[RMDB]
RNA sequence: GGGAACGACUCGAGUAGAGUCGAAAAACCGCUCUUCGGAGCGGUAAAAGAUAUGGAAAUCAUCGAUCAGCUUGGGAGAACCGAAUCGGAAACGAUUCGUGGUUCAUCGAUCAAGCUGGGAGAUUUCCUAAGUCAAAGCCAACGUUUCGACGUUGGCGAUGCCAAUUUGAUUCGUCAAAUUGGCAUCAAAAGAAACAACAACAACAAC
Reactivity to DMS in 0.01 (KOAc 150mM, MgCl2 10mM, bicine 150mM(pH8.5), 24C), signal-to-noise 2, nucleotides 027 to 156: a040c000c000g000c000u010c000u000u000c300g050g010a010g030c000g050g020u000a010a020a090a120g000a100u010a210u000g000g000a020a010a020u000c000a170u000c120g020a180u000c000a000g000c000u000u010g010g010g000a240g010a010a040c020c000g020a020a010u000c000g020g000a170a110a280c000g000a030u000u000c000g010u010g060g010u000u000c020a140u000c090g000a180u000c010a020a010g010c000u010g000g010g000a170g010a030u000u000u000c000c010u000a040a080g010u000c030a110a110a130g020c000c000a000a010c010g000u010u000u000c220g010a080c020g020u000u000g000g030c000
Reactivity to 2A3 in 0.01 (KOAc 150mM, MgCl2 10mM, bicine 150mM(pH8.5), 24C), signal-to-noise 6, nucleotides 027 to 156: a000c010c000g010c000u000c010u030u080c300g130g000a010g010c010g000g000u010a000a010a000a020g030a010u060a040u120g010g020a020a010a010u040c130a090u100c120g140a150u080c020a010g000c000u010u000g030g000g000a060g000a010a010c000c010g010a000a000u000c010g020g030a060a050a040c010g000a000u010u000c010g080u090g020g010u040u020c020a130u120c020g050a050u070c000a000a000g000c000u000g000g010g000a020g000a000u000u000u000c000c000u010a120a020g040u020c080a140a050a050g000c010c000a000a000c000g000u030u130u180c250g080a010c010g000u000u000g000g000c000